RNA sequence: GGGAACGACUCGAGUAGAGUCGAAAAGAUAUGGACCGACAUACGCUGACCACGAUGACGGUCGGAAACGACCGCAUUAUCAAGCGUGUCGGUCCUAAGUCAAAGUUACUUACUUCGGUAAGUAACACAUGUCUCUGUGGUUCGCCACAGAGACAUGAAAAGAAACAACAACAACAAC
Reactivity to DMS in 0.01 (KOAc 150mM, MgCl2 10mM, bicine 150mM(pH8.5), 24C), signal-to-noise 3, nucleotides 027 to 126: g010a030u000a190u010g000g000a020c000c010g000a010c010a080u010a050c090g040c000u000g000a140c300c290a100c160g000a020u000g000a130c010g000g030u000c000g000g000a020a040a110c000g020a010c000c000g020c010a000u000u000a070u000c120a080a030g010c010g020u000g010u000c000g000g020u010c000c000u000a010a090g000u000c000a050a120a160g020u000u000a000c000u000u000a000c000u000u020c170g020g010u000a000a010g010u000a000a000c010a180
Reactivity to 2A3 in 0.01 (KOAc 150mM, MgCl2 10mM, bicine 150mM(pH8.5), 24C), signal-to-noise 3, nucleotides 027 to 126: g030a000u030a000u090g020g000a000c010c010g030a000c040a090u300a060c040g000c010u060g150a260c090c160a100c300g000a010u020g160a160c000g010g000u000c000g000g000a030a040a000c000g000a010c000c000g000c010a000u020u050a150u290c260a220a010g000c010g000u020g000u000c010g020g000u010c000c000u010a000a000g010u020c030a020a050a090g020u010u010a000c010u000u000a000c010u020u100c260g050g010u020a000a000g000u000a010a000c030a010